[RMDB]
RNA sequence: GGGAACGACUCGAGUAGAGUCGAAAAGACGUGGAGGUAUCGCGCCCUCCUUUGCGCGUAAGUACGUCGAAAUUCGGUGCUCUGGAUCGCACCGUUUGAUCCAUUAGAUAUCCGCUUUGUGCCGCGGUUGGGCAUUUACACUUACCCGAAAGGGGAAGAGGAUAAUGCCAUUCGUGGCAUUAUCCUCAAAAGAAACAACAACAACAAC
Reactivity to DMS in 0.01 (KOAc 150mM, MgCl2 10mM, bicine 150mM(pH8.5), 24C), signal-to-noise 3, nucleotides 027 to 156: g020a060c040g030u010g010g010a100g000g020u000a040u000c040g030c000g020c100c050c040u000c080c040u000u030u000g020c050g030c040g000u000a120a160g000u000a010c020g010u000c040g000a070a070a080u000u010c000g030g030u000g030c020u000c110u000g010g010a080u000c250g040c030a060c030c020g020u010u000u000g000a130u000c050c020a180u010u010a090g020a150u000a110u010c030c010g010c070u010u000u000g030u000g020c010c020g000c030g030g030u000u000g000g020g010c020a050u000u000u000a100c080a090c070u000u000a160c000c000c020g010a060a130a190g010g010g000g000a050a100
Reactivity to 2A3 in 0.01 (KOAc 150mM, MgCl2 10mM, bicine 150mM(pH8.5), 24C), signal-to-noise 5, nucleotides 027 to 156: g020a000c010g010u050g020g090a080g050g060u080a080u210c000g000c010g010c050c020c010u220c020c030u060u070u100g030c020g000c010g010u040a050a060g050u040a020c010g000u010c020g030a070a030a030u070u050c000g000g000u010g000c010u020c050u240g110g040a120u090c050g000c000a010c010c000g000u020u010u030g020a020u010c020c010a050u060u150a040g040a070u050a050u120c020c010g020c060u080u100u120g050u030g020c000c030g030c050g050g000u110u060g060g010g000c020a020u030u040u070a040c080a000c020u060u070a040c000c000c010g070a110a080a050g000g000g000g000a020a040